Description
Chemical mapping of a 207-nucleotide RNA with 2A3 and DMS. Source: RMDB library RFM130, as collected in RNAgym. The RNA was probed in 150 mM KOAc, 10 mM MgCl2 and 150 mM bicine (pH 8.5) at 24 C. For DMS the reverse transcriptase was MarathonRT.

RNA sequence: GGGAACGACUCGAGUAGAGUCGAAAAAAAAUCUGGAUCAAGCUGAAAAUUGAAACACUGAACAACGAGAGUUGUUCGUGAGUCUCUCAAAUUUUCGCAACACGAUGAUGAAUCGAAAGAAACAUCUUCGGAAAAGCUGUGCGUUCGCGCACAGCAACUAUAGUAACUGGUUCGCCAGUUACUAUAGAAAAGAAACAACAACAACAAC
Reactivity to 2A3 in 0.01 (KOAc 150mM, MgCl2 10mM, bicine 150mM(pH8.5), 24C), signal-to-noise 5, nucleotides 027 to 156: a010a000a000a030u060c060u090g030g010a030u110c060a070a030g010c040u110g040a000a000a010a020u030u020g010a030a060a010c020a010c040u140g000a000a000c010a000a000c010g030a010g010a010g170u010u010g000u010u000c000g000u010g010a040g050u040c070u000c010u000c090a040a100a120u020u010u010u010c020g000c010a030a040c070a020c060g010a000u030g000a000u000g000a010a020u010c010g020a040a030a050g010a000a010a000c000a000u000c000u040u010c020g040g040a030a090a040a030g000c000u000g000u010g000c000g020u010u080c290g000c010g000c060a000c000a010g000c000a000a000
Reactivity to DMS in 0.01 (KOAc 150mM, MgCl2 10mM, bicine 150mM(pH8.5), 24C), signal-to-noise 3, nucleotides 027 to 156: a070a070a120a080u010c040u010g010g000a160u000c050a100a100g030c050u000g010a010a010a010a040u000u010g010a060a050a100c010a050c020u020g020a020a000c000a030a010c010g010a300g000a300g010u000u000g010u010u000c010g030u010g000a090g000u000c110u020c070u000c070a060a040a080u000u000u000u000c030g010c070a110a070c090a090c030g010a050u000g020a030u000g000a020a300u000c050g010a160a110a230g000a030a000a300c010a000u000c030u000u000c000g020g010a080a070a090a130g010c020u020g010u000g010c000g050u000u000c300g040c030g020c010a010c010a010g020c000a000a010